About this RNA:
An RNA of 177 nucleotides, treated with DMS and 2A3 and read out base by base. DMS adducts were read by reverse transcription with MarathonRT. For 2A3, 9,277 sequencing reads were counted. In probing experiments dimethyl sulfate is read out at A N1 and C N3, which are open when not base-paired. The DMS profile rests on 9,862 reads. The data come from the RNA Mapping Database (RMDB), library OK1LIB.
[RMDB]
RNA sequence: GGGAACGACUCGAGUAGAGUCGAAAAGAAGACGUGACGAAAAGUCACGAAAAGGUGCAAUGUCCUGUAAGCACCAAACACGGAAAAACCGUGACAGGACAAACGAGUGGGAGACCACUCGAAAAGAAUUAAAUUAGCCUUUCGAGGCUAAUUUAAUAAAAGAAACAACAACAACAAC
Reactivity to DMS in 0.01 (KOAc 150mM, MgCl2 10mM, bicine 150mM(pH8.5), 24C), signal-to-noise 5, nucleotides 027 to 126: g020a140a090g020a180c010g010u020g000a010c000g000a090a100a090a100g000u000c000a000c010g010a030a040a080a110g000g010u010g000c010a180a100u010g010u020c000c010u020g000u020a100a130g020c010a020c000c000a050a080a100c010a030c020g000g000a130a140a090a130a160c010c000g000u000g000a020c060a050g000g000a010c010a080a140a150c040g000a020g010u000g010g010g000a240g000a190c000c000a000c010u000c010g000a050a050a080a100g010a100
Reactivity to 2A3 in 0.01 (KOAc 150mM, MgCl2 10mM, bicine 150mM(pH8.5), 24C), signal-to-noise 6, nucleotides 027 to 126: g140a060a010g090a040c020g000u010g000a000c010g060a060a070a180a160g010u000c000a000c000g010a000a010a000a010g000g000u010g000c030a150a300u120g010u010c000c010u020g030u110a060a020g000c000a000c000c010a000a010a000c010a000c000g000g040a130a070a030a070a040c000c000g000u000g010a020c020a010g000g000a000c010a030a080a000c010g000a000g000u000g000g010g000a070g030a080c000c000a000c000u010c000g000a000a000a000a010g100a010